[RMDB]
RNA sequence: GGGAACGACUCGAGUAGAGUCGAAAACGCAGAGGGUUCUGAUAACAAAGAACCUAGAUAGCCGCAUCGGUAUUAUAGGAUGUAGUCGGUGAGCCGGAAUGCCUGCAUCGUAAGCCUAUAAGUAAAGUUAAGUGUAAUCACUUCGGUGAUUACACAACACAAGGAGAGUGUUCGCACUCUCCUUGUGAAAAGAAACAACAACAACAAC
Reactivity to DMS in 0.01 (KOAc 150mM, MgCl2 10mM, bicine 150mM(pH8.5), 24C), signal-to-noise 2, nucleotides 027 to 156: c170g080c030a080g020a260g000g000g020u000u020c010u010g040a130u000a110a220c300a190a230a060g000a020a040c000c000u000a050g000a300u000a140g040c020c060g000c110a090u000c100g020g030u000a080u000u010a020u020a040g020g010a060u020g030u000a110g040u000c030g000g000u000g010a100g020c030c000g000g040a070a230u000g000c060c000u040g080c000a070u000c030g020u020a130a170g000c000c020u010a050u010a020a080g000u020a090a030a120g010u000u000a030a060g030u020g020u000a000a010u010c000a020c000u010u030c270g060g020u000g010a000u000u000a010c000a050c000a010a090
Reactivity to 2A3 in 0.01 (KOAc 150mM, MgCl2 10mM, bicine 150mM(pH8.5), 24C), signal-to-noise 2, nucleotides 027 to 156: c100g030c050a080g060a150g080g010g040u000u000c010u020g060a080u070a240a060c040a050a100a000g000a000a000c000c000u000a010g020a080u050a010g010c040c030g060c070a160u150c070g060g010u090a100u170u060a040u050a050g060g000a050u060g060u110a030g080u090c010g000g000u020g030a010g000c000c050g030g030a090a010u090g020c000c010u050g070c010a020u000c020g040u060a040a050g000c000c010u040a020u030a120a070g080u140a110a070a050g020u060u140a130a020g000u000g010u000a010a010u010c000a000c000u050u060c180g020g000u010g000a000u000u000a000c000a020c000a000a010